[RMDB]
RNA sequence: GGGAACGACUCGAGUAGAGUCGAAAACUAUUACCCGUGCGGUUCUCGUUGCUAUCGCUAUUACAUCGAUUGGAUUUGCAGGCAUCAAGAUUGGUGCAGGUGGUGCGUUAGACAUGGCAGGAGUCAAUACCCACAUUGAGUUCGCUCAAUGUGGGUAAAAAGAAACAACAACAACAAC
Reactivity to 2A3 in 0.01 (KOAc 150mM, MgCl2 10mM, bicine 150mM(pH8.5), 24C), signal-to-noise 2, nucleotides 027 to 126: c020u040a090u160u190a100c010c000c050g000u060g020c050g120g000u030u070c020u000c060g110u140u090g000c000u000a000u110c070g010c040u030a050u150u150a040c080a130u120c080g130a130u030u220g010g050a090u060u060u240g050c060a050g050g010c020a020u000c000a010a110g140a250u100u070g020g000u000g030c030a040g010g050u020g000g050u060g030c020g000u000u020a050g000a010c060a090u020g090g030c000a000g020g020a010g000u020c000a020a030
Reactivity to DMS in 0.01 (KOAc 150mM, MgCl2 10mM, bicine 150mM(pH8.5), 24C), signal-to-noise 3, nucleotides 027 to 126: c080u000a070u020u000a070c060c020c020g010u000g010c060g040g000u000u010c050u000c040g010u020u010g000c050u010a070u000c150g000c050u000a090u000u010a090c150a020u000c040g020a130u000u010g010g000a130u000u000u010g010c070a080g010g000c010a030u000c070a040a090g010a140u010u000g010g000u010g000c010a100g000g010u000g020g010u010g020c060g000u000u010a050g000a080c080a060u000g000g000c050a040g000g010a090g010u010c100a100a150
An RNA of 177 nucleotides, treated with 2A3 and DMS and read out base by base. For 2A3 the reverse transcriptase was SuperScript II with manganese. Reactivities are given for positions 27 through 126. Source: RMDB library OK2TRN, as collected in RNAgym.